An RNA of 177 nucleotides, treated with 2A3 and DMS and read out base by base. DMS adducts were read by reverse transcription with MarathonRT. Source: RMDB library OK1LIB, as collected in RNAgym. For 2A3, 1,241 sequencing reads were counted.
RNA sequence: GGGAACGACUCGAGUAGAGUCGAAAACGCCCAGGACACAAGUGCGAUGCCGGCGAUGACCGUGCCGAUCGUCGGUGUCGCGAAGGCGACGAGAACGACCAGCAGGACGAAGCUAGGAAUGGUCUGGAUGGUACCACCCUUUCGAGGGUGGUACCAUAAAAGAAACAACAACAACAAC
Reactivity to 2A3 in 0.01 (KOAc 150mM, MgCl2 10mM, bicine 150mM(pH8.5), 24C), signal-to-noise 2, nucleotides 027 to 126: c040g070c030c000c000a000g190g030a020c060a020c050a160a040g140u040g160c000g000a020u010g000c000c000g000g000c000g010a010u020g080a100c120c020g050u070g030c040c030g040a010u000c000g000u000c000g040g010u030g000u000c000g010c000g000a010a010g060g000c010g000a140c000g040a040g040a090a060c020g070a050c030c000a000g030c000a010g050g040a010c010g070a070a000g010c040u070a080g050g140a040a060u030g040g000u030c030u000g070g090
Reactivity to DMS in 0.01 (KOAc 150mM, MgCl2 10mM, bicine 150mM(pH8.5), 24C), signal-to-noise 2, nucleotides 027 to 126: c160g000c000c000c010a230g020g020a110c160a100c170a160a060g000u000g010c000g000a000u000g000c020c010g000g000c030g000a010u030g000a100c100c050g000u010g020c020c040g000a010u000c040g000u000c000g010g030u000g000u010c000g070c020g020a110a030g000g000c010g030a070c000g000a140g010a130a150c070g010a090c040c020a050g000c050a050g020g000a110c120g010a050a110g030c090u010a030g000g020a030a080u010g000g020u000c020u010g010g000

Reactivities are given for positions 27 through 126.